Source: RMDB library TTRINS, as collected in RNAgym.
Structure probing data (DMS) for a 177-nucleotide construct.
For DMS, 6,195 sequencing reads were counted.
Conditions: 150 mM KOAc, 10 mM MgCl2 and 150 mM bicine (pH 8.5), 24 C.
DMS adducts were read by reverse transcription with MarathonRT.

RNA sequence: GGGAACGACUCGAGUAGAGUCGAAAAGAUAUGGAUCGUUGGUUUGAUGUAUGACUUUUGACGCUCUAAGGAUCGGAAACGAUCCGAUGAGCGAUAAGUCAUACAUCAAACCACCGAUCCUAAGUCACUUAAACUAUGUCUUCGGACAUAGUUUAAGAAAAGAAACAACAACAACAAC
Reactivity to DMS in 0.01 (KOAc 150mM, MgCl2 10mM, bicine 150mM(pH8.5), 24C), signal-to-noise 4, nucleotides 027 to 126: g020a050u000a300u010g000g000a010u000c010g020u000u000g010g010u000u000u000g000a020u010g010u000a000u000g000a010c000u000u000u010u030g030a250c110g000c000u000c000u020a260a300g010g010a010u010c000g010g000a100a110a240c010g000a010u000c000c000g000a110u010g000a010g010c000g010a020u000a000a000g010u000c000a000u000a000c010a000u000c000a000a000a000c000c000a000c020c000g010a000u000c000c000u000a010a070g010u010c040a280